[RMDB]
RNA sequence: GGGAACGACUCGAGUAGAGUCGAAAACACUCCGCCUCCUACGUUUCGUAGAGAGUUAUUGAUAUCGGAACAGCGUCAGCAACGAGAAAAAAGAUUUAAUAUUACGGUAUCAAAAAAUGCUGAAGCAAUACCUGGUCGGUUUCGACCGACCAGGUAUAAAAGAAACAACAACAACAAC
Reactivity to DMS in 0.01 (KOAc 150mM, MgCl2 10mM, bicine 150mM(pH8.5), 24C), signal-to-noise 1, nucleotides 027 to 126: c180a300c140u010c120c050g020c120c000u010c000c000u000a000c000g000u070u000u000c090g000u060a010g000a180g040a040g000u000u000a090u030u000g000a060u000a000u000c010g010g030a100a200c300a090g000c000g000u000c000a040g000c160a020a060c300g000a190g050a000a050a000a140a060a060g000a060u000u190u000a060a240u150a010u000u010a010c020g000g010u050a000u000c040a000a000a210a110a090a160u060g020c000u000g050a050a040g000c000a100
Reactivity to 2A3 in 0.01 (KOAc 150mM, MgCl2 10mM, bicine 150mM(pH8.5), 24C), signal-to-noise 1, nucleotides 027 to 126: c020a010c090u010c000c020g000c000c000u030c000c000u000a030c110g120u180u010u300c070g000u060a000g060a000g020a000g120u000u130a110u100u050g010a000u000a000u020c000g040g180a080a090c060a110g030c040g030u050c000a020g070c000a000a300c070g180a090g080a210a040a000a020a060a000g140a150u050u200u110a170a060u060a010u190u000a000c000g000g000u050a030u000c000a000a000a000a000a000a000u000g010c030u050g070a070a000g050c000a000